RNA sequence: GGGAACGACUCGAGUAGAGUCGAAAAUCUGCCAUUCAGGGCGCUGGUUUCAAAACUCUGGCAGAAGGCCAGCAAGUUGAAUUCACCAUUGAAAAUGGUGCGAAAGGCCCAGCAGCUGCUAACGUAAGGUUAUGCCUAGAUUCGUCUAGGCAUAACCAAAAGAAACAACAACAACAAC
Reactivity to DMS in 0.01 (KOAc 150mM, MgCl2 10mM, bicine 150mM(pH8.5), 24C), signal-to-noise 4, nucleotides 027 to 126: u020c050u020g010c040c030a130u010u020c130a090g000g000g010c060g030c030u000g000g010u000u010u030c040a080a060a080a040c050u010c020u000g000g000c000a230g010a130a100g060g020c000c000a000g000c170a040a040g010u030u010g000a080a080u040u020c010a010c000c000a020u020u020g000a100a080a160a050u000g010g030u000g000c180g000a020a090a090g020g000c190c000c030a090g010c020a070g010c030u000g020c080u020a040a090c160g000u030a080a100
Reactivity to 2A3 in 0.01 (KOAc 150mM, MgCl2 10mM, bicine 150mM(pH8.5), 24C), signal-to-noise 4, nucleotides 027 to 126: u020c010u030g120c010c010a090u110u080c060a050g040g010g010c050g020c020u030g010g050u050u080u040c030a110a030a000a020c020u030c020u040g000g000c000a050g090a300a020g190g000c010c000a010g000c070a080a010g010u010u000g050a050a040u050u020c010a000c000c000a020u010u150g090a040a060a010a020u030g010g000u030g030c000g100a160a040a030g060g000c010c000c000a000g000c000a000g030c000u110g060c060u060a130a130c080g090u090a170a040